[RMDB]
RNA sequence: GGGAACGACUCGAGUAGAGUCGAAAAGCACAAAGGUCGCGGACAGACCAAAUAUCAUCCUCUCACCGUGCUGGUGCCUAAGCAGAGGCUCUGGUGUCCGAGUCGAGGCGGUACAAACCUCCAUCCGGGUCGACCUGAUAUUCGUAUCAGGUCGACCAAAAGAAACAACAACAACAAC
Reactivity to 2A3 in 0.01 (KOAc 150mM, MgCl2 10mM, bicine 150mM(pH8.5), 24C), signal-to-noise 2, nucleotides 027 to 126: g010c040a000c060a070a060a020g000g000u030c030g020c060g140g200a040c040a050g000a000c000c020a000a000a000u060a000u020c070a000u040c010c000u020c000u000c000a000c010c060g190u210g170c190u220g000g000u020g000c040c000u060a110a040g030c100a020g090a000g000g040c000u000c010u010g000g000u010g000u020c020c000g010a050g020u030c060g060a020g000g010c010g000g000u130a040c150a060a100a040c000c000u000c020c000a060u090c070c050g080